[RMDB]
An RNA of 177 nucleotides, treated with DMS and read out base by base. The reactions ran in a buffer of 150 mM KOAc, 10 mM MgCl2 and 150 mM bicine (pH 8.5), at 24 C.
RNA sequence: GGGAACGACUCGAGUAGAGUCGAAAAGAUAUGGAUGCGAGUGAUAGCUGCGGUCGGAAACGACCGGCAGCAAUAAUUCACCGCAUCCUAAGUCAAAUCUGAGCAGGUGUUCGCACCUGCUCAGAAAUCAUUAGCGCAUGUUCGCAUGCGCUAAUGAAAAAGAAACAACAACAACAAC
Reactivity to DMS in 0.01 (KOAc 150mM, MgCl2 10mM, bicine 150mM(pH8.5), 24C), signal-to-noise 1, nucleotides 027 to 126: g000a010u000a100u000g000g000a010u000g010c000g000a140g020u010g010a030u000a110g060c000u010g010c010g020g020u000c000g000g000a020a010a080c010g030a000c010c000g010g080c000a010g000c000a050a040u030a090a090u020u000c000a000c000c000g000c000a020u000c000c000u000a000a080g000u010c010a100a190a140u010c000u000g000a000g040c000a000g000g000u000g010u000u000c180g020c010a000c000c000u000g040c000u000c000a000g010a030a070a060
It was measured as part of the RMDB library TTRDES.
The DMS profile rests on 1,574 reads.
Values cover nucleotides 27 to 126.